[RMDB]
RNA sequence: GGGAACGACUCGAGUAGAGUCGAAAACUGCACAAAGCCCUCGCAGAUGGACGGAGACUCCACGAUCUCGUCCUUGUCCUCGGACUCCUCCUCACUGUCGACGAAGUUCUCCUCUUCCGUUUCCACAUAUUCCUCCACGAGGUCAUCCAUGAUAAUACGAAGAGUUGAAUUUCGAUUCAACUCUUCGAAAAGAAACAACAACAACAAC
Reactivity to 2A3 in 0.01 (KOAc 150mM, MgCl2 10mM, bicine 150mM(pH8.5), 24C), signal-to-noise 4, nucleotides 027 to 156: c020u030g040c040a030c060a130a080a060g030c010c000c020u040c020g040c020a040g010a110u080g010g020a010c080g070g030a050g000a030c020u070c110c030a090c120g060a140u030c000u010c050g040u020c020c030u020u070g040u010c030c010u020c040g010g020a030c020u000c000c000u020c000c000u030c020a040c030u040g030u080c000g040a060c050g050a090a010g030u080u050c020u010c000c010u010c020u060u010c030c000g020u010u020u000c040c000a070c020a070u160a090u070u080c010c020u010c020c000a060c070g010a000g010g010u020c010a010u040c060c010a010u110g070a040u200a180a040u240a110
Reactivity to DMS in 0.01 (KOAc 150mM, MgCl2 10mM, bicine 150mM(pH8.5), 24C), signal-to-noise 2, nucleotides 027 to 156: c040u010g000c070a120c090a070a070a140g010c010c000c000u000c060g020c080a130g000a150u020g020g000a050c020g020g020a100g010a040c020u000c040c080a100c090g000a080u000c020u000c020g010u010c020c020u010u000g010u000c020c020u000c020g030g010a120c030u000c020c010u010c030c010u000c060a100c020u000g000u000c020g000a100c080g020a080a090g000u010u010c010u000c020c030u010c020u000u000c040c020g000u010u010u000c010c010a110c080a040u000a150u000u000c030c000u000c030c030a070c000g010a120g000g010u010c040a100u010c030c030a050u020g020a060u010a060a080u000a240
The record gives the reactivity of an RNA of 207 nucleotides to 2A3 and DMS. The 2A3 profile rests on 3,779 reads. The RNA was probed in 150 mM KOAc, 10 mM MgCl2 and 150 mM bicine (pH 8.5) at 24 C. Reactivities are rounded to 0.1 and cut off at 0 and 3.